RNA sequence: GGGAACGACUCGAGUAGAGUCGAAAAAUCGAAGCGGUCGGCAAUAUCGGCGAUUUGCGACAAGGUAUUGUCGGAUAGCGUACGAAGCGUACCGAGAUUGCUGUCGAUGAGGCCAGUUGAAGCCUGAAUUAGGUACCCUAUUCGUAGGGUACCUAAUAAAAGAAACAACAACAACAAC
Reactivity to 2A3 in 0.01 (KOAc 150mM, MgCl2 10mM, bicine 150mM(pH8.5), 24C), signal-to-noise 6, nucleotides 027 to 126: a000u020c010g000a000a000g020c010g030g030u020c010g020g000c030a030a010u020a010u060c010g020g000c040g100a130u060u060u210g120c020g030a080c040a060a050g110g020u150a130u190u010g010u010c000g030g040a030u050a020g060c050g010u030a090c030g070a100a020g100c030g080u030a020c010c020g010a020g010a050u100u170g010c020u050g090u120c010g010a020u050g050a010g000g000c010c030a030g010u050u060g050a050a010g010c000c000u040g050a070
Reactivity to DMS in 0.01 (KOAc 150mM, MgCl2 10mM, bicine 150mM(pH8.5), 24C), signal-to-noise 6, nucleotides 027 to 126: a030u000c010g010a130a050g010c000g010g010u000c010g000g000c020a030a030u000a020u000c010g000g000c010g000a120u000u000u000g010c020g000a060c050a050a070g010g020u020a060u000u000g010u000c010g000g000a040u000a060g000c050g020u000a110c040g010a040a100g010c150g010u000a120c000c000g010a070g010a130u010u010g010c010u000g010u000c010g010a030u000g000a050g000g010c010c030a100g020u000u000g000a100a090g000c020c000u000g000a080